[RMDB]
RNA sequence: GGGAACGACUCGAGUAGAGUCGAAAAAUGUUAAUGGUAAUGUUCUUGGUGUUCAUCAAACUAACACUGGUUAUACUGGUGGGGCCACUGUCAUACGUGCGACAGAUGCUGCCCCAUAUGUUGAUGAACCCUUUGGUUAGUUCGCUAACCAAAGGGUAAAAGAAACAACAACAACAAC
Reactivity to DMS in 0.01 (KOAc 150mM, MgCl2 10mM, bicine 150mM(pH8.5), 24C), signal-to-noise 2, nucleotides 027 to 126: a080u000g010u000u020a100a140u000g010g010u020a080a050u010g010u000u000c050u000u000g000g020u010g000u000u000c020a020u000c090a040a030a060c100u000a020a140c290a090c090u000g030g040u000u000a070u010a280c050u010g030g040u000g020g000g000g020c010c050a060c010u000g000u000c010a090u020a160c300g010u000g040c170g000a000c000a020g020a060u000g010c130u010g040c010c000c000c040a010u000a030u010g010u000u000g000a050u000g020a030
Conditions: 150 mM KOAc, 10 mM MgCl2 and 150 mM bicine (pH 8.5), 24 C. Structure probing data (DMS) for a 177-nucleotide construct. The DMS profile rests on 1,391 reads.